[RMDB]
RNA sequence: GGGAACGACUCGAGUAGAGUCGAAAAGGAAAUAUUAUGUCGCCCAAAACCGUUGCGCUAGCGCAGCCAAGAAUCCUGAUCGUUGAGGACGAUGGCGAUAUCGCGGGCAUGCUGGUCGAUCUGGUCAACUACGCUGGAUGUUCGCAUCCAGCGUAGUAAAAGAAACAACAACAACAAC
Reactivity to 2A3 in 0.01 (KOAc 150mM, MgCl2 10mM, bicine 150mM(pH8.5), 24C), signal-to-noise 3, nucleotides 027 to 126: g070g050a060a160a040u270a100u300u200a210u280g120u060c030g060c000c000c090a060a050a060a040c020c000g040u060u040g000c010g010c030u000a030g000c010g000c030a010g000c000c000a050a030g090a040a020u000c010c020u100g090a080u010c030g040u060u080g160a100g090g030a020c000g010a010u050g040g000c040g020a020u020a130u080c040g010c040g030g010g000c000a000u030g000c000u040g000g040u060c030g000a060u000c030u080g030g040u070c030a050
Reactivity to DMS in 0.01 (KOAc 150mM, MgCl2 10mM, bicine 150mM(pH8.5), 24C), signal-to-noise 1, nucleotides 027 to 126: g020g010a020a070a050u040a020u000u000a030u010g000u030c010g000c010c000c010a070a030a130a060c070c040g030u050u000g000c070g000c110u020a120g070c030g000c110a090g000c010c090a020a030g000a220a160u010c000c000u030g000a110u020c050g060u000u060g000a110g000g020a020c000g020a130u000g000g020c010g000a070u000a070u010c130g000c030g010g000g020c070a050u040g000c030u000g000g040u000c030g020a040u010c040u000g030g040u020c150a070